This 177-nucleotide RNA was probed chemically with DMS. It was measured as part of the RMDB library TTRINS.
RNA sequence: GGGAACGACUCGAGUAGAGUCGAAAAGAUAUGGAUCCUUGAACUACGCAGGUCCCCUUCGAUGAAAGAGGCGUCAUCGGAAACGAUGACGCCUCUGGAGAAGGUCCUGCGCAAGGAUCCUAAGUCACAAAGGCUAUAACUUCGGUUAUAGCCUUUGAAAAGAAACAACAACAACAAC
Reactivity to DMS in 0.01 (KOAc 150mM, MgCl2 10mM, bicine 150mM(pH8.5), 24C), signal-to-noise 1, nucleotides 027 to 126: g020a060u000a300u030g000g020a020u000c000c000u020u000g020a160a110c180u010a300c030g000c010a000g020g020u020c140c300c000c030u010u020c010g010a210u010g010a140a190a010g000a010g000g020c000g070u000c000a040u020c000g010g000a110a110a210c030g010a010u010g000a030c020g000c000c010u010c000u010g000g000a060g010a030a020g020g000u000c010c020u000g010c010g010c010a000a000g010g010a000u000c010c000u000a000a090g000u010c010a200